[RMDB]
Chemical mapping of a 177-nucleotide RNA with DMS.
For DMS, 1,485 sequencing reads were counted.
RNA sequence: GGGAACGACUCGAGUAGAGUCGAAAACGCUUAAAGACACUCACCUCCCGCAAAAACAUCCUCGGGUUGGUCUUUUUGAGGGUUUUGAGCGUCGGAUGGAGCAGGGACUGGAGAUGGUUUGUCACCCGUUUAGGGAUUGGUUCGCCAAUCCCUAAACAAAAGAAACAACAACAACAAC
Reactivity to DMS in 0.01 (KOAc 150mM, MgCl2 10mM, bicine 150mM(pH8.5), 24C), signal-to-noise 2, nucleotides 027 to 126: c070g000c020u000u000a030a060a110g020a030c010a040c020u000c040a140c080c040u000c000c010c010g010c230a060a030a060a060a060c100a060u010c090c050u010c080g000g010g010u010u000g010g010u010c030u000u010u000u010u000g000a040g010g010g000u000u000u000u000g000a020g020c020g020u000c040g040g040a130u000g000g010a040g000c060a060g000g020g000a060c050u000g010g000a050g000a060u000g010g010u000u000u000g000u000c090a110c030c020c120